[RMDB]
This 177-nucleotide RNA was probed chemically with 2A3 and DMS.
DMS adducts were read by reverse transcription with MarathonRT.
For 2A3, 671 sequencing reads were counted.
Reactivities are given for positions 27 through 126.
Conditions: 150 mM KOAc, 10 mM MgCl2 and 150 mM bicine (pH 8.5), 24 C.
RNA sequence: GGGAACGACUCGAGUAGAGUCGAAAAGAUCUAUCUAGGGAUGAUGAGUGAUGGAAUCAGGGAAGAACAUAUUAUGAAGAUAAUAGAAUCCAAUGUUCAGAUAAGUGCAAAAUUCGUACUGCAGACAAUAAAGUCGACAAUUCGUUGUCGACUUUAUAAAAGAAACAACAACAACAAC
Reactivity to 2A3 in 0.01 (KOAc 150mM, MgCl2 10mM, bicine 150mM(pH8.5), 24C), signal-to-noise 1, nucleotides 027 to 126: g040a070u040c000u010a050u000c010u040a050g140g000g000a060u090g010a010u030g000a050g110u060g030a020u050g000g050a050a050u040c060a090g190g000g000a000a090g040a090a030c020a050u150a010u110u030a050u150g020a010a000g030a150u030a040a000u080a030g070a070a000u000c000c010a050a060u040g010u040u030c060a020g060a190u100a190a000g010u010g030c010a000a000a110a300u150u080c060g010u040a040c000u000g050c030a060g020a100c030a070
Reactivity to DMS in 0.01 (KOAc 150mM, MgCl2 10mM, bicine 150mM(pH8.5), 24C), signal-to-noise 3, nucleotides 027 to 126: g020a080u010c060u010a070u020c030u010a100g020g000g000a040u000g000a090u000g020a110g030u010g020a040u000g010g010a050a110u010c110a110g000g010g010a070a080g000a070a050c050a080u010a050u000u000a030u000g000a070a120g000a020u010a030a020u000a050g000a090a120u000c060c060a060a080u020g010u010u000c030a060g010a110u010a040a050g020u000g000c040a060a070a070a110u010u010c120g010u000a040c070u010g020c080a060g010a110c210a050
About this RNA
It was measured as part of the RMDB library OK2TRN.